[RMDB]
RNA sequence: GGGAACGACUCGAGUAGAGUCGAAAAUCAAUGAUAUGAAACUAAGCAGUCUUGAUAGAAAGCAGUCUACAUGCCGUUUGUGUCCAUUUAAAGGCUAAAAGCUGCAAGUCUGGACAAUAAAGAGAGCCGUAUUACCCCCUUUCGAGGGGGUAAUACGAAAAGAAACAACAACAACAAC
Reactivity to DMS in 0.01 (KOAc 150mM, MgCl2 10mM, bicine 150mM(pH8.5), 24C), signal-to-noise 1, nucleotides 027 to 126: u000c000a070a040u010g010a180u010a090u030g000a070a170a160c040u000a050a150g000c030a050g000u000c000u010u010g020a040u000a110g040a100a090a160g040c060a040g010u010c010u000a140c120a170u000g010c000c020g000u000u000u000g040u000g010u000c060c040a200u000u000u000a080a120a110g010g010c010u000a060a140a140a210g070c000u000g000c180a030a120g000u000c130u000g010g000a020c010a050a060u000a060a160a110g000a070g000a090g030c300